[RMDB]
Source: RMDB library ARCHII, as collected in RNAgym.
This 207-nucleotide RNA was probed chemically with 2A3 and DMS.
2A3 adducts were read by reverse transcription with SuperScript II with manganese.
For DMS the reverse transcriptase was MarathonRT.
RNA sequence: GGGAACGACUCGAGUAGAGUCGAAAACGGUGGCGCGUGCCUGUAGUCCCAGCUACUCGGGAGGCUGAGGCUGGAGGAUCGCUUGAGUCCAGGAGUUCUGGGCUGUAGUGCGCUAUGCCGAUCGGGUGUCCGCACUAAGUUCGGCAUCAAUAUGGUGGAUCCGUAUACAGUUCGCUGUAUACGGAUCAAAAGAAACAACAACAACAAC
Reactivity to 2A3 in 0.01 (KOAc 150mM, MgCl2 10mM, bicine 150mM(pH8.5), 24C), signal-to-noise 4, nucleotides 027 to 156: c050g020g030u090g030g020c050g000c010g020u030g050c020c020u120g020u040a000g070u150c010c000c020a000g020c060u110a030c020u020c060g110g000g010a180g050g030c000u010g050a000g000g020c050u090g020g070a110g060g030a060u140c040g000c010u030u050g080a010g020u000c000c010a080g090g060a060g020u070u070c010u010g010g010g030c010u030g000u010a030g030u020g020c030g000c030u030a030u050g000c000c000g020a080u070c070g040g020g000u020g050u050c100c060g060c070a010c050u080a210a110g010u040u020c000g000g010c020a000u010c020a050a080u280a090u210g070g070u070g130
Reactivity to DMS in 0.01 (KOAc 150mM, MgCl2 10mM, bicine 150mM(pH8.5), 24C), signal-to-noise 1, nucleotides 027 to 156: c030g020g060u020g000g030c050g010c050g000u000g020c000c020u010g000u000a040g040u020c000c010c000a060g040c010u010a040c040u000c090g010g000g020a260g030g020c020u010g000a050g020g000c030u000g020g010a060g010g020a070u000c090g020c040u000u000g000a080g030u000c000c000a090g010g000a110g010u000u010c040u000g020g000g040c000u000g010u000a020g030u000g040c000g020c010u000a060u020g020c010c020g000a070u000c080g020g030g010u010g000u010c140c100g170c030a150c020u000a020a070g000u000u000c000g040g030c000a050u000c090a070a120u000a100u010g020g010u000g000